The data come from the RNA Mapping Database (RMDB), library OK2TST. An RNA of 177 nucleotides, treated with 2A3 and DMS and read out base by base. For DMS, 1,088 sequencing reads were counted.
[RMDB]
RNA sequence: GGGAACGACUCGAGUAGAGUCGAAAAUUCAACAGCCAGGAUUCAUCAACACGGUCUCCCAUGGAUGAGGAGGCUCUAGAGUACGUUGUGCUCAACUAGAAGUGAUUCUUUUCUCAUUCCACGCCACCGUAUGGGUCUCUUUCGAGAGACCCAUACGAAAAGAAACAACAACAACAAC
Reactivity to 2A3 in 0.01 (KOAc 150mM, MgCl2 10mM, bicine 150mM(pH8.5), 24C), signal-to-noise 1, nucleotides 027 to 126: u110u040c010a050a040c030a020g100c040c000a030g010g040a030u050u150c010a010u010c000a040a120c030a000c080g010g040u030c090u000c000c010c000a030u100g040g090a100u060g030a060g040g000a000g050g000c000u000c000u040a020g000a000g030u000a010c100g220u150u190g040u260g060c000u010c000a090a070c090u070a060g000a190a050g090u010g050a100u110u040c010u080u120u000u000c020u000c000a050u060u020c030c010a090c020g100c060c060a060c020
Reactivity to DMS in 0.01 (KOAc 150mM, MgCl2 10mM, bicine 150mM(pH8.5), 24C), signal-to-noise 1, nucleotides 027 to 126: u000u020c060a090a050c100a060g010c060c030a040g010g000a110u000u010c030a030u020c040a020a140c140a120c070g040g010u000c000u010c000c020c020a130u000g000g010a020u000g010a150g010g000a030g010g000c080u000c030u010a070g000a070g000u000a010c070g030u000u010g010u000g030c000u000c070a050a120c070u010a030g010a040a070g000u000g000a080u000u000c020u010u010u000u000c010u000c050a060u000u000c010c030a060c130g010c000c050a030c180
Values are in units of 0.01, from 0 to 300, in steps of 10. For DMS the reverse transcriptase was MarathonRT.